[RMDB]
RNA sequence: GGGAACGACUCGAGUAGAGUCGAAAACCCUGGUUAUUCGUAACCAGGGGUUGAGUGAAUCCUCUCAGUGCAUCGGUGGAUCACUCGAAACGCAUGGACGACAAUUACGGUUAUUCGUAACCGUAAAAUUCCUGAUGCCAUUCGUGGCAUCAGGAAUAAAAGAAACAACAACAACAAC
Reactivity to 2A3 in 0.01 (KOAc 150mM, MgCl2 10mM, bicine 150mM(pH8.5), 24C), signal-to-noise 2, nucleotides 027 to 126: c000c000c000u000g010g000u010u000a030u030u070c210g040u050a020a000c000c000a000g010g030g020g000u100u170g000a010g000u030g020a060a180u000c010c000u000c010u020c050a070g070u100g260c040a140u160c110g050g000u030g010g000a020u000c010a000c010u000c000g020a090a050a020c100g000c070a100u130g040g060a060c040g040a040c060a050a130u040u000a020c010g020g010u010u000a030u010u050c100g050u030a010a000c000c010g030u000a000a000a000
Reactivity to DMS in 0.01 (KOAc 150mM, MgCl2 10mM, bicine 150mM(pH8.5), 24C), signal-to-noise 2, nucleotides 027 to 126: c000c000c000u010g000g010u010u000a030u010u000c140g010u010a010a010c000c000a020g020g010g000g010u000u000g010a000g010u010g000a100a090u000c000c000u000c000u000c110a160g000u000g000c160a110u010c090g000g000u000g000g000a040u000c000a010c000u010c000g000a030a060a080c110g000c090a090u000g010g010a050c040g010a060c120a090a170u000u000a000c000g010g010u000u000a040u010u000c190g010u000a000a010c000c000g010u000a000a010a080